This 177-nucleotide RNA was probed chemically with DMS and 2A3. Source: RMDB library OK2TST, as collected in RNAgym.
RNA sequence: GGGAACGACUCGAGUAGAGUCGAAAAGCUCUGUCAAAUGAUUAGGCGCAAGGUGAGCAUACCUACGAACCAUUUCUAUGGACUCCCAUCCGCCCAUUUCCUGAAGCACUGAUAAUGGGACGCCUGACUGACCAGAGGGAUUCGUCCCUCUGGUCAGAAAAGAAACAACAACAACAAC
Reactivity to DMS in 0.01 (KOAc 150mM, MgCl2 10mM, bicine 150mM(pH8.5), 24C), signal-to-noise 1, nucleotides 027 to 126: g010c020u000c020u000g030u000c070a130a140a050u010g000a090u000u000a050g010g010c060g030c070a040a080g010g000u010g010a020g010c140a070u010a080c040c010u000a130c190g000a080a070c060c050a120u020u000u000c010u000a130u020g010g000a080c070u000c000c000c000a110u000c040c060g020c050c010c000a020u000u000u010c010c050u010g000a080a070g020c120a040c130u010g000a070u000a050a020u000g010g010g000a220c000g020c030c040u020g000a100
Reactivity to 2A3 in 0.01 (KOAc 150mM, MgCl2 10mM, bicine 150mM(pH8.5), 24C), signal-to-noise 1, nucleotides 027 to 126: g010c010u000c040u020g220u190c050a110a050a250u160g090a180u160u110a060g050g000c010g000c030a010a130g000g000u100g000a020g060c030a100u130a060c000c010u010a010c060g060a060a100c080c030a120u120u090u060c080u100a150u100g020g020a030c020u010c050c000c000a060u050c000c020g130c060c000c020a020u030u030u080c020c030u100g040a150a030g110c120a080c160u060g000a020u060a200a000u010g000g000g000a030c000g000c000c000u020g000a050
The DMS profile rests on 719 reads.